This 177-nucleotide RNA was probed chemically with 2A3 and DMS.
The RNA was probed in 150 mM KOAc, 10 mM MgCl2 and 150 mM bicine (pH 8.5) at 24 C.
[RMDB]
RNA sequence: GGGAACGACUCGAGUAGAGUCGAAAACCACCGACGGUCACCGUUUCGCAGGUGCCGUUGACGGUCAGCGUGUUGUCCGAGCCGGCCACGUUCAGUGACUUGCCGUCAGCGCAGUCAAGGGUGGCGGGUCUCAAGUAGGGUUCGCCCUACUUGAGACAAAAGAAACAACAACAACAAC
Reactivity to 2A3 in 0.01 (KOAc 150mM, MgCl2 10mM, bicine 150mM(pH8.5), 24C), signal-to-noise 4, nucleotides 027 to 126: c000c000a010c020c020g020a020c010g060g060u300c080a000c010c010g060u110u230u270c190g020c130a090g000g000u000g000c000c010g010u000u020g040a020c020g050g040u070c050a040g050c060g100u070g040u110u160g060u020c060c050g000a040g040c040c020g090g000c010c010a020c020g100u160u080c050a100g050u010g080a030c000u100u240g010c010c020g170u200c100a060g010c010g010c080a010g020u030c020a010a040g080g030g020u000g020g010c020g070g000
Reactivity to DMS in 0.01 (KOAc 150mM, MgCl2 10mM, bicine 150mM(pH8.5), 24C), signal-to-noise 5, nucleotides 027 to 126: c010c010a100c140c020g000a010c000g010g010u020c030a010c010c010g000u010u010u000c200g020c190a160g010g010u000g010c030c000g000u010u000g010a080c060g000g010u000c100a080g010c100g000u000g000u000u000g020u010c040c040g010a150g000c030c020g010g000c020c010a010c010g010u010u010c120a130g020u010g000a020c010u000u010g050c010c010g030u010c170a110g030c140g020c030a020g000u000c020a100a080g000g010g030u000g000g000c010g000g010